[RMDB]
RNA sequence: GGGAACGACUCGAGUAGAGUCGAAAACUGCUUCAGGUUAGCCCCUGGUGUGUGUCAAUAAUUUGUAAGGGUUAAUAAAGAACUGUUGGGUCAAACAGACCUGGUCCACAUCCUGGCUCUGUCACUACUAAUUUACUCGUUUCGACGAGUAAAUUAGAAAAGAAACAACAACAACAAC
Reactivity to 2A3 in 0.01 (KOAc 150mM, MgCl2 10mM, bicine 150mM(pH8.5), 24C), signal-to-noise 2, nucleotides 027 to 126: c010u030g000c000u080u060c030a050g120g000u020u050a030g030c030c010c000c020u010g020g040u020g010u000g010u030g010u020c030a020a110u130a200a100u080u170u280g150u150a160a020g030g050g000u040u030a080a020u100a110a210a060g060a080a050c040u020g050u100u090g030g000g000u030c030a110a050a150c000a030g020a010c000c000u000g010g000u050c050c000a030c010a060u050c020c010u000g040g020c010u000c010u040g110u080c060a010c150u120a020
Reactivity to DMS in 0.01 (KOAc 150mM, MgCl2 10mM, bicine 150mM(pH8.5), 24C), signal-to-noise 4, nucleotides 027 to 126: c030u000g010c090u010u000c060a040g010g010u000u020a100g000c090c070c030c030u010g030g020u010g020u000g000u010g000u000c060a060a070u010a100a110u010u000u010g020u020a080a060g010g000g010u000u000a050a070u000a070a110a140g000a070a100c120u000g020u000u000g010g000g000u010c060a070a090a100c100a100g000a070c030c020u000g010g000u000c040c060a030c110a080u010c040c030u000g000g000c110u000c040u000g000u000c040a060c100u010a170